An RNA of 177 nucleotides, treated with 2A3 and DMS and read out base by base. Conditions: 150 mM KOAc, 10 mM MgCl2 and 150 mM bicine (pH 8.5), 24 C.

RNA sequence: GGGAACGACUCGAGUAGAGUCGAAAACUUGGAGGGGCCUUUCAGGCAAGGCAAAAUUCCCCUUGCUCUACCACCUUGAAGAGUACGAUCUAGACAAGGUCCAGGCGCACAGUAUUGCUUCCAGCAAUAGCUAAUGGGUGUUCGCACCCAUUAGCUAAAAAGAAACAACAACAACAAC
Reactivity to 2A3 in 0.01 (KOAc 150mM, MgCl2 10mM, bicine 150mM(pH8.5), 24C), signal-to-noise 1, nucleotides 027 to 126: c010u030u090g070g000a020g040g000g030g000c000c040u070u170u150c060a000g030g000c070a020a000g000g000c000a030a020a020a300u060u080c060c000c000c010u010u040g030c010u020c020u070a070c040c040a040c010c000u060u080g050a080a030g030a010g050u010a140c110g040a040u010c010u040a030g020a110c010a030a000g000g000u000c030c040a020g000g000c030g000c000a030c010a020g060u090a110u060u120g000c000u100u070c020c000a030g000c030a000a110
Reactivity to DMS in 0.01 (KOAc 150mM, MgCl2 10mM, bicine 150mM(pH8.5), 24C), signal-to-noise 3, nucleotides 027 to 126: c090u000u000g020g030a110g000g060g000g000c010c000u000u010u000c150a120g020g010c040a100a020g010g000c080a050a050a060a170u020u000c020c060c000c190u010u000g010c020u000c020u000a110c120c140a070c060c060u000u000g000a060a060g010a070g000u000a070c230g000a090u000c040u000a120g030a190c080a020a040g010g000u000c100c100a120g000g030c030g020c020a040c110a060g020u020a040u000u000g010c050u000u000c060c070a090g010c160a020a090